RNA sequence: GGGAACGACUCGAGUAGAGUCGAAAAGAUAUGGACGUGGAAGAGACGAUAAGCGUGUAUCGGAAACGAUAUAACGCUUUUGACGUCUCCCACGUCCUAAGUCAAAAGCAUGACUUCGGUCAUGCAACAUAAAUCGUAUGUUCGCAUACGAUUUAUGAAAAGAAACAACAACAACAAC
Reactivity to DMS in 0.01 (KOAc 150mM, MgCl2 10mM, bicine 150mM(pH8.5), 24C), signal-to-noise 9, nucleotides 027 to 126: g010a020u000a190u010g000g010a010c010g040u000g000g010a200a160g010a020g010a010c000g020a130u010a010a010g010c000g040u000g010u000a000u000c000g020g000a050a030a090c000g020a010u000a000u000a070a030c000g020c000u000u000u000u010g020a200c090g010u000c000u000c010c000c000a000c000g010u000c000c000u000a000a050g000u000c020a110a090a120a140g010c000a010u000g010a010c000u000u020c230g030g010u000c000a000u000g010c000a060a110
Reactivity to 2A3 in 0.01 (KOAc 150mM, MgCl2 10mM, bicine 150mM(pH8.5), 24C), signal-to-noise 9, nucleotides 027 to 126: g020a000u030a010u080g010g000a000c030g000u010g020g100a300a260g010a220g000a030c120g100a200u100a300a010g000c010g010u010g000u010a010u000c000g000g000a050a010a000c010g000a000u000a000u010a110a050c010g010c000u020u000u010u040g060a040c060g000u000c000u000c000c000c000a000c000g000u000c000c000u000a000a000g000u000c000a010a020a030a110g000c000a000u010g000a010c000u050u100c300g100g000u000c000a000u010g000c000a000a010
This 177-nucleotide RNA was probed chemically with DMS and 2A3.
For DMS, 40,745 sequencing reads were counted.
DMS adducts were read by reverse transcription with MarathonRT.